[RMDB]
RNA sequence: GGGAACGACUCGAGUAGAGUCGAAAAGCCGGUGAUGAAACUUUAGGUGCAUGCCGAGUUGGUAACAGAACUCGUAAAUCCACUGUUGCAACUUUCUAUAGUUGCCAAUGACGAAAACUACGGUGCUCAACUAGCUGCGUAAGCAGCCUAGCCGCACGAUAGAGGUUCAGUUCGCUGAACCUCUAUCAAAAGAAACAACAACAACAAC
Reactivity to 2A3 in 0.01 (KOAc 150mM, MgCl2 10mM, bicine 150mM(pH8.5), 24C), signal-to-noise 2, nucleotides 027 to 156: g060c000c070g000g060u080g010a140u040g020a100a140a070c070u170u150u150a100g030g010u020g050c030a030u110g030c000c020g000a020g010u000u010g020g010u040a020a010c000a000g020a040a000c000u020c040g070u130a030a020a010u040c040c000a080c090u000g030u080u040g000c000a000a000c000u050u130u160c120u300a100u080a160g020u010u010g000c010c010a170a190u150g030a010c050g080a080a050a080a000c060u180a050c050g060g000u000g000c020u020c090a020a080c000u000a000g000c000u020g000c020g060u120a200a130g010c000a030g010c020c000u020a000g020c010c030g000c000a010c050

An RNA of 207 nucleotides, treated with 2A3 and read out base by base. The RNA was probed in 150 mM KOAc, 10 mM MgCl2 and 150 mM bicine (pH 8.5) at 24 C. For 2A3, 762 sequencing reads were counted. The data come from the RNA Mapping Database (RMDB), library ARCHII. For 2A3 the reverse transcriptase was SuperScript II with manganese. Values cover nucleotides 27 to 156.